[RMDB]
RNA sequence: GGGAACGACUCGAGUAGAGUCGAAAAAGUGAGUAUGGCUCGUUACGACGAGCGAUACUCACAACGGUUUUCCUAAAUCGUCGUGAGACGGACCUUGGAAAACCUAGUAUUUAAAUAACUAGGUCAAAUUAGCCUAGAUCCUUCGGGAUCUAGGCAAGCUCAUUAAAUCCUUCGGGAUUUAAUGAGCAAAAGAAACAACAACAACAAC
Reactivity to 2A3 in 0.01 (KOAc 150mM, MgCl2 10mM, bicine 150mM(pH8.5), 24C), signal-to-noise 3, nucleotides 027 to 156: a000g000u000g000a000g000u010a000u010g140g010c010u010c010g000u020u050a140c300g010a000c000g000a070g000c000g000a000u000a000c000u000c000a000c000a000a000c010g010g000u000u000u000u000c000c000u000a000a000a020u070c010g000u000c000g020u020g100a130g000a040c000g010g010a010c000c000u010u030g010g010a000a000a010a000c000c000u010a010g020u000a050u060u120u120a080a190a100u110a050a020c090u030a020g000g000u010c020a030a050a160u110u090a040g000c000c000u000a000g000a000u000c000c000u030u060c130g080g010g010a000u000c000u000a000g000g000c000a000a000